[RMDB]
RNA sequence: GGGAACGACUCGAGUAGAGUCGAAAAGAUAUGGAGGAUAUAGCUAGAAGAUGUGUCGGAAACGACACACCUUCUUGGACCUAUGAUCCUCCUAAGUCAAACAGCGUUCCCUUCGGGGAACGCUGAAGGAUACGACUUUGUUCGCAAAGUCGUAUCCAAAAGAAACAACAACAACAAC
Reactivity to DMS in 0.01 (KOAc 150mM, MgCl2 10mM, bicine 150mM(pH8.5), 24C), signal-to-noise 1, nucleotides 027 to 126: g000a040u000a300u010g000g000a010g020g020a030u000a000u000a000g000c010u000a010g020a040a010g040a010u000g020u000g040u000c000g020g010a100a090a200c000g030a020c000a000c010a000c020c000u000u000c000u000u000g000g000a100c300c010u000a010u000g000a040u000c000c000u010c010c000u000a010a040g020u010c030a140a090a300c020a010g010c020g010u000u000c000c000c000u020u000c210g030g000g020g000a010a000c000g010c000u000g000a040a040